[RMDB]
RNA sequence: GGGAACGACUCGAGUAGAGUCGAAAACAGGUAACACUCUUGGCAUUUAAAAAAAAACCAUAUAUCUAGGAUUAUAACAUCCUAUCUUGUAUCUAGAGGGAAAAAUACAAUCUGAAAGCCUCUUUCCCACCUACCCAUAGUCUUUUGCCAAAGGUAAAUCUCUUACUGGUUUCGACCAGUAAGAGAUAAAAGAAACAACAACAACAAC
Reactivity to 2A3 in 0.01 (KOAc 150mM, MgCl2 10mM, bicine 150mM(pH8.5), 24C), signal-to-noise 2, nucleotides 027 to 156: c030a010g040g020u100a100a050c050a020c050u060c020u030u060g010g000c010a110u050u200u300a040a080a030a020a000a010a000a000a020c090c060a110u210a030u020a090u130c040u060a010g010g010a010u050u080a170u180a250a050c070a000u000c020c000u030a060u040c040u050u090g040u040a080u030c040u050a010g010a070g030g020g040a100a070a010a000a000u150a040c050a050a050u010c050u090g020a140a010a000g030c000c000u000c020u020u000u010c020c000c000a010c000c010u000a010c000c000c030a030u020a020g080u050c040u060u210u110u060g020c010c010a080a010a010g020g040u100a080a250